[RMDB]
RNA sequence: GGGAACGACUCGAGUAGAGUCGAAAACGACCGGACUGGGUCCGCGUCGUGCCGGAUGUCCUGAAGGGGAUGGAAGUCGUCGUCGAAUUCCUUACCCGGCCGGAGAGUCCGGUCGCGUUGCCGGUUCCACUACCGGAUACUUCGGUAUCCGGUAGUGAAAAGAAACAACAACAACAAC
Reactivity to 2A3 in 0.01 (KOAc 150mM, MgCl2 10mM, bicine 150mM(pH8.5), 24C), signal-to-noise 4, nucleotides 027 to 126: c000g020a020c000c000g010g020a010c060u240g120g090g120u030c040c040g020c030g030u160c040g010u040g060c020c000g000g020a040u060g050u060c020c010u080g240a050a030g030g010g000g020a010u170g020g010a010a020g050u020c050g010u050c050g100u060c020g100a030a040u010u010c000c000u010u050a070c000c000c010g010g000c020c010g000g010a050g010a010g050u000c000c000g000g000u000c010g010c030g020u040u090g070c040c010g050g000u030u020c010
Reactivity to DMS in 0.01 (KOAc 150mM, MgCl2 10mM, bicine 150mM(pH8.5), 24C), signal-to-noise 3, nucleotides 027 to 126: c010g000a010c010c010g020g000a020c000u010g000g020g000u010c000c000g020c150g040u030c080g000u000g030c070c020g000g000a040u010g010u020c010c010u000g020a300a140g000g000g020g000a090u040g000g000a010a020g000u000c000g030u050c300g000u020c030g000a010a010u000u000c000c000u000u030a280c000c000c000g000g010c220c170g010g010a030g000a140g010u000c000c000g000g000u000c040g010c070g000u000u000g010c010c020g030g000u000u000c040